[RMDB]
RNA sequence: GGGAACGACUCGAGUAGAGUCGAAAAUCAGAGUUCUGUAGUAAGUUUUCCAACUUGCCAUUCUGCCAUUUAUUAACUACAACAAUAAAAAAAUGGAAGCUACCCUUUACUACAAUAAGUGCUUUUCAGGCAUUAUCUGAAUUUUACAACAACUCUAGGUAGGUGAGUAGUUCGCUACUCACCUACCAAAAGAAACAACAACAACAAC
Reactivity to 2A3 in 0.01 (KOAc 150mM, MgCl2 10mM, bicine 150mM(pH8.5), 24C), signal-to-noise 1, nucleotides 027 to 156: u090c020a010g000a020g000u180u300c080u070g000u000a000g010u020a010a060g000u060u100u240u080c050c010a040a000c020u030u030g140c010c000a020u010u010c030u060g050c020c020a060u010u060u020a110u020u150a100a050c070u280a030c070a110a010c020a050a090u180a000a070a040a010a000a000a010u080g000g000a040a000g050c050u090a070c020c000c000u050u060u040a020c030u000a000c030a010a080u200a200a020g010u020g000c000u130u070u100u230c030a010g020g030c020a020u010u100a020u040c000u000g070a120a080u050u040u130u230a040c010a080a000c000a000a100c040u040c030u130a070